[RMDB]
RNA sequence: GGGAACGACUCGAGUAGAGUCGAAAAACUAGCAUCAAUGAAAAUGGCAAUAAGCACAAUGCAAAUGCCCAGAAUAAACGAUUGGCACGUAAUGGUUCGCCUACCACUUUUUUCUGAGAUGCUGCCGCAUAUUACUCCCCUUCGGGGGAGUAAUAUGAAAAGAAACAACAACAACAAC
Reactivity to 2A3 in 0.01 (KOAc 150mM, MgCl2 10mM, bicine 150mM(pH8.5), 24C), signal-to-noise 3, nucleotides 027 to 126: a000c060u050a010g000c010a010u000c000a030a040u060g060a070a030a010a020u030g030g000c050a030a140u090a150a050g010c010a010c040a090a110u170g010c020a070a070a060u040g010c030c000c020a040g130a140a140u190a080a080a010c090g130a140u060u070g020g010c020a010c070g010u050a070a090u080g150g040u110u090c040g010c010c010u030a020c000c040a020c030u100u040u030u030u030u000c010u020g030a030g010a050u000g000c000u020g020c040c010g030
Reactivity to DMS in 0.01 (KOAc 150mM, MgCl2 10mM, bicine 150mM(pH8.5), 24C), signal-to-noise 5, nucleotides 027 to 126: a120c170u000a030g020c010a020u000c010a080a150u000g000a030a010a060a040u000g000g000c120a070a060u010a100a150g010c020a070c120a060a080u010g010c030a040a130a120u000g010c000c010c080a090g000a070a060u010a030a060a070c160g010a080u000u000g010g010c010a050c110g000u010a080a060u010g010g000u010u000c200g010c020c010u000a040c150c070a130c080u010u000u000u000u000u010c030u010g010a300g000a010u000g000c020u000g000c070c030g020

An RNA of 177 nucleotides, treated with 2A3 and DMS and read out base by base. The reactions ran in a buffer of 150 mM KOAc, 10 mM MgCl2 and 150 mM bicine (pH 8.5), at 24 C. Reactivities are given for positions 27 through 126. The DMS profile rests on 3,334 reads.